[RMDB]
Chemical mapping of a 207-nucleotide RNA with 2A3 and DMS. For DMS, 2,424 sequencing reads were counted. For DMS the reverse transcriptase was MarathonRT. Source: RMDB library OK3TST, as collected in RNAgym.
RNA sequence: GGGAACGACUCGAGUAGAGUCGAAAAAUGCAACUUCCUUUUUGAGCAUUUAUGAUAAGAUUUUAAUGCUUUUAUUUAAGGUCGUAAUAAAAGGGGUAUGUACAUACUUACAUGUAAAGAUACAGGUAUGUUCAGGUUAUAUGUAUAAAAAGGCUAAGAAAAUUACUGGAUUCGUCCAGUAAUUUUCAAAAGAAACAACAACAACAAC
Reactivity to 2A3 in 0.01 (KOAc 150mM, MgCl2 10mM, bicine 150mM(pH8.5), 24C), signal-to-noise 2, nucleotides 027 to 156: a010u090g000c000a060a040c020u060u040c000c000u020u040u000u040u150g020a050g000c010a000u030u040u100a110u100g090a070u110a210a130g050a090u090u140u110u160a040a000u040g010c000u100u020u000u070a140u020u130u070a010a030g010g000u000c010g040u020a020a040u090a100a220a040a020g030g030g030g010u010a040u050g030u000a010c010a020u010a000c020u070u020a010c030a080u080g080u060a000a160a110g080a030u070a040c040a010g040g000u010a000u010g010u010u010c010a000g030g030u030u020a150u030a020u240g030u030a120u300a080a040a090a010a000g050g040c010u230a020a210
Reactivity to DMS in 0.01 (KOAc 150mM, MgCl2 10mM, bicine 150mM(pH8.5), 24C), signal-to-noise 1, nucleotides 027 to 156: a130u010g020c050a080a110c060u010u020c010c010u010u010u000u030u000g000a090g010c020a030u000u000u030a060u010g000a250u000a040a200g030a300u000u000u010u010a020a030u000g010c030u000u020u000u000a040u010u020u010a030a050g030g000u010c010g010u000a030a060u000a040a050a090a050g010g020g050g020u010a050u000g070u010a030c000a040u000a050c020u010u010a030c050a090u000g050u000a070a090a300g010a250u000a050c040a070g000g050u000a020u000g020u000u010c020a070g010g000u000u000a090u000a060u010g010u000a100u000a020a050a060a050a100g000g010c070u000a060a250